[RMDB]
Background:
An RNA of 207 nucleotides, treated with 2A3 and read out base by base. The data come from the RNA Mapping Database (RMDB), library M2RFPK. Values cover nucleotides 27 to 156.
RNA sequence: GGGAACGACUCGAGUAGAGUCGAAAAGAAAGAAAGAAGAAUCACCAGGAGGCAAGGAUCCUCAACUACGUUAUUCGGGUACCUUGAGUUGAGAGGAGCUAGUGGUGCGCCCGGCCUGGAGAUCAAAACACGACAGGCGGGUUCGCCCGCCUGUCAAGCCUAUACAUAUCUUCGGAUAUGUAUAGGCAAAAGAAACAACAACAACAAC
Reactivity to 2A3 in 0.01 (KOAc 150mM, MgCl2 10mM, bicine 150mM(pH8.5), 24C), signal-to-noise 1, nucleotides 027 to 156: g010a050a170a000g060a040a060a010g050a050a010g020a070a030u050c010a020c010c000a000g030g020a020g010g000c010a000a210g000g000a000u000c000c000u000c000a000a000c010u280a090c080g080u160u140a050u090u140c000g010g000g030u010a050c010c000u100u220g030a020g020u020u020g010a030g000a010g030g000a020g010c000u000a000g100u020g070g000u020g000c000g020c070c010c000g050g000c000c020u020g000g000a050g000a020u110c030a000a120a000a020c090a000c110g070a000c000a010g000g000c000g000g000g000u000u000c000g040c000c000c000g040c060c010u000g000u000c000a000a000
Conditions: 150 mM KOAc, 10 mM MgCl2 and 150 mM bicine (pH 8.5), 24 C.